[RMDB]
RNA sequence: GGGAACGACUCGAGUAGAGUCGAAAAACGUCCGUCUACGGACGGACGAAGUUAACUUGAUGAUAACUUAUGAUAGGGACAUCUGAUGUCUAUGACUGAUUUAUCAUGAUAGUAGAACUGAUUAUAACAUCUGCUUAAAUUUCGAUUUAAGCAGAUGAAAAGAAACAACAACAACAAC
Reactivity to 2A3 in 0.01 (KOAc 150mM, MgCl2 10mM, bicine 150mM(pH8.5), 24C), signal-to-noise 9, nucleotides 027 to 126: a000c010g000u000c020c000g000u000c010u020a090c300g090g000a010c000g000g000a000c000g010a030a000g000u010u050a050a030c010u010u030g050a010u010g000a000u020a020a010c010u030u030a040u180g070a070u080a110g140g020g010a010c010a030u080c250u300g130a180u050g040u000c010u020a060u130g090a060c030u010g020a040u020u000u010a010u000c020a030u040g110a120u070a050g030u010a040g060a070a010c020u040g050a140u160u170a130u080a160a030
Reactivity to DMS in 0.01 (KOAc 150mM, MgCl2 10mM, bicine 150mM(pH8.5), 24C), signal-to-noise 9, nucleotides 027 to 126: a140c020g010u000c000c000g010u000c010u000a140c180g020g000a010c000g000g010a000c010g000a010a010g010u000u010a060a050c010u000u000g000a140u000g000a010u000a000a020c110u000u000a010u010g000a170u010a080g010g010g000a020c010a030u010c200u030g030a050u000g010u000c000u000a070u010g000a300c260u000g000a020u000u000u000a010u000c000a020u000g000a100u010a020g000u000a080g000a070a060c020u010g000a100u020u020a090u010a090a230